[RMDB]
RNA sequence: GGGAACGACUCGAGUAGAGUCGAAAACUGCCGCCGGGACGCAGUGAUCCUCGCAGGGUCGCACGGUCGCCUCGGGUCGGCCUCGUGUCGGCUCGACCUGCGAGGGGAUCGAGUGGCGAGCCCGACCAAAACUUUCUCGCCUUCGGGCGAGAAAGAAUCUACUUCAUGCCUUCGGGCAUGAAGUAGAAAAAGAAACAACAACAACAAC
Reactivity to 2A3 in 0.01 (KOAc 150mM, MgCl2 10mM, bicine 150mM(pH8.5), 24C), signal-to-noise 1, nucleotides 027 to 156: c040u100g100c080c040g050c030c010g100g010g010a000c030g020c000a000g020u000g030a000u050c000c020u000c020g030c030a010g030g110g060u250c070g040c120a100c080g140g050u140c100g110c050c000u030c000g020g010g020u020c010g000g000c000c010u030c110g300u300g050u040c010g000g030c030u060c030g030a060c000c000u020g000c020g000a020g000g000g020g020a000u000c000g000a100g120u140g070g000c020g010a060g030c000c000c000g040a040c010c030a020a050a000a070c000u010u000u000c000u000c010g030c000c000u050u120c210g100g000g000c000g000a000g000a000a000a010g000a000a010